[RMDB]
Chemical mapping of a 207-nucleotide RNA with 2A3.
The RNA was probed in 150 mM KOAc, 10 mM MgCl2 and 150 mM bicine (pH 8.5) at 24 C.
RNA sequence: GGGAACGACUCGAGUAGAGUCGAAAAUUUUUAAGCAAUAUGCUUUCCUGAAAGGCUAGCUAUAAUUGACAGGCAUUUAGAGGAAAGGGAAAGGAAAGUAACAUUUGAACAUCAACUGUGUGCCAUGAUGGUUAUAAGGAUUAGGGGGAUAGAGAUGUCUUCACAGCGUGUUCGCACGCUGUGAAGAAAAAGAAACAACAACAACAAC
Reactivity to 2A3 in 0.01 (KOAc 150mM, MgCl2 10mM, bicine 150mM(pH8.5), 24C), signal-to-noise 1, nucleotides 027 to 156: u100u090u010u000u140a150a040g000c060a080a070u020a070u240g040c040u110u000u000c020c020u060g090a110a000a000g000g000c010u040a000g000c000u000a010u020a150a110u130u130g040a040c020a050g000g080c020a030u050u080u140a000g010a000g000g070a000a060a040g010g000g020a060a040a000g060g000a030a030a000g060u120a070a070c060a110u070u040u080g000a020a050c010a120u100c070a050a000c030u070g000u010g050u050g070c000c000a020u110g000a010u060g000g070u000u140a210u030a170a000g080g040a070u000u140a080g010g000g000g030g000a000u050a020g020a000g040a070u120g040